[RMDB]
RNA sequence: GGGAACGACUCGAGUAGAGUCGAAAAUACGCCGUUCGCGGCGUAAAAAAGCGUACUACAGGUACGGAGCCUCUACCCACCAGUGCUCCCAAAUAGGAGCACUGAGGAGGAACUACUCCUGUACCUGUAUCGCAAAAAAACUGGGUUCGCCCAGUAAGUCCUAUUCUUGGUUCGCCAAGAAUAGGACAAAAGAAACAACAACAACAAC
Reactivity to 2A3 in 0.01 (KOAc 150mM, MgCl2 10mM, bicine 150mM(pH8.5), 24C), signal-to-noise 1, nucleotides 027 to 156: u070a020c030g020c040c000g050u030u080c300g000c030g180g020c000g000u020a000a000a000a000a050a000g020c020g030u080a090c020u010a000c050a000g000g010u000a000c000g010g000a010g000c040c000u110c010u050a180c000c040c110a020c020c000a020g000u000g010c000u090c030c040c000a190a300a040u300a130g000g000a000g000c030a000c000u000g000a020g000g000a000g010g010a040a010c060u280a090c000u110c000c050u140g000u020a000c000c000u000g000u000a000u010c010g000c000a010a010a000a000a040a000a000c040u060g000g040g010u080u020c260g150c030c000c000a010g000u000a050a050